[RMDB]
RNA sequence: GGGAACGACUCGAGUAGAGUCGAAAAUUUGGUUAAGUACUUCCCCCUUGCGAGCAACAGGUGUCGUCCUGUUUGUUAGCCCUGCGCGGUUUCGUCCGUGUAGUGAUGGAGGGUGUGCCUGACCCACGGAUGUUAUCCCCUUCGGGGGAUAACAUCCAAAAGAAACAACAACAACAAC
Reactivity to 2A3 in 0.01 (KOAc 150mM, MgCl2 10mM, bicine 150mM(pH8.5), 24C), signal-to-noise 3, nucleotides 027 to 126: u140u080u080g020g000u060u040a020a000g000u010a000c000u300u300c020c010c000c000c020u030u120g010c010g000a020g010c000a000a000c000a010g000g000u200g130u150c090g110u120c010c000u030g040u130u060u080g000u010u000a010g010c000c000c030u020g000c030g000c010g010g020u170u190u170c130g100u000c050c000g000u000g050u020a000g000u020g060a100u150g000g040a120g040g000g000u030g020u030g020c030c000u010g000a020c020c000c000a020c030